[RMDB]
RNA sequence: GGGAACGACUCGAGUAGAGUCGAAAAGACCUUCAGUUCGCUGAAGGUCGAUGAUGGUAAGAGAGAUUACCAUCUGUUUAGUGAUAUGGAUAAGAUCUCUCAGUGAACGUGCUUUCGAGCACGUUAAGGCUACACUUGCUUUCGAGCAAGUGUAGCCAAAAGAAACAACAACAACAAC
Reactivity to 2A3 in 0.01 (KOAc 150mM, MgCl2 10mM, bicine 150mM(pH8.5), 24C), signal-to-noise 2, nucleotides 027 to 126: g000a000c010c000u000u000c000a010g010u000u100c150g000c080u010g010a000a000g000g020u000c000g020a000u020g020a000u000g000g080u030a170a040g020a000g000a000g000a000u000u000a010c000c020a010u010c020u020g110u030u200u120a200g020u110g160a070u090a080u300g120g060a070u070a180a050g010a000u020c000u020c010u010c010a000g080u030g200a020a000c010g020u010g000c010u000u070u110c140g060a010g020c000a000c000g010u010u020a000a000
Reactivity to DMS in 0.01 (KOAc 150mM, MgCl2 10mM, bicine 150mM(pH8.5), 24C), signal-to-noise 1, nucleotides 027 to 126: g010a010c010c000u000u000c000a010g010u000u020c180g010c000u010g000a020a010g000g040u000c000g000a010u010g000a010u000g000g000u000a060a100g000a030g000a000g010a080u000u000a060c020c000a020u000c000u000g000u010u010u000a110g010u010g010a220u000a080u010g010g010a110u010a090a060g000a050u000c000u000c000u010c000a130g020u010g010a040a020c000g020u020g030c000u000u010u010c140g000a030g010c000a000c000g000u000u000a070a100
This 177-nucleotide RNA was probed chemically with 2A3 and DMS. Values cover nucleotides 27 to 126. The reactions ran in a buffer of 150 mM KOAc, 10 mM MgCl2 and 150 mM bicine (pH 8.5), at 24 C.